[RMDB]
An RNA of 207 nucleotides, treated with 2A3 and DMS and read out base by base. For DMS the reverse transcriptase was MarathonRT. Conditions: 150 mM KOAc, 10 mM MgCl2 and 150 mM bicine (pH 8.5), 24 C. The data come from the RNA Mapping Database (RMDB), library OK3TST.
RNA sequence: GGGAACGACUCGAGUAGAGUCGAAAAAGCGCAUGUAGAGAGAUUGUACACGUUGAGGCUAGUGUGUCUCUCAACGUGAGUCUCUCUACAUAUGGAGAGUGAGUGUGUUGAGAAGACACACUAGCACUCAACACAUACCUCACUCUCUAUACACGCAUACCACUGCUAUAUUCGUAUAGCAGUGGUAAAAAGAAACAACAACAACAAC
Reactivity to 2A3 in 0.01 (KOAc 150mM, MgCl2 10mM, bicine 150mM(pH8.5), 24C), signal-to-noise 5, nucleotides 027 to 156: a010g050c040g000c050a050u190g000u030a000g000a000g000a000g010a040u020u170g100u100a060c080a040c170g000u010u000g000a010g010g030c030u030a050g050u020g010u010g020u030c010u010c000u010c020a000a000c000g020u040g010a000g010u000c050u000c000u000c000u010a010c000a010u030a010u050g010g000a010g000a000g000u050g030a100g050u110g020u010g010u060u000g000a020g030a170a060g030a030c040a000c000a010c030u010a000g020c010a020c010u010c000a000a000c000a000c000a000u060a020c000c030u050c030a070c010u000c000u000c000u000a000u010a000c070a000c010g000c010a010
Reactivity to DMS in 0.01 (KOAc 150mM, MgCl2 10mM, bicine 150mM(pH8.5), 24C), signal-to-noise 3, nucleotides 027 to 156: a070g010c040g040c040a110u000g000u010a030g000a020g010a040g020a160u030u000g020u000a090c050a150c080g020u000u000g020a050g020g040c010u010a000g010u010g030u010g000u000c010u000c020u000c010a020a020c000g010u000g000a160g020u000c000u000c000u000c000u000a050c130a050u000a000u000g040g010a080g010a030g030u000g020a130g010u000g020u000g010u000u000g000a060g010a140a110g000a060c010a040c010a020c010u000a040g010c050a130c010u000c010a020a000c000a090c080a120u000a060c070c050u000c100a100c010u000c010u000c000u000a010u000a030c100a070c030g040c000a300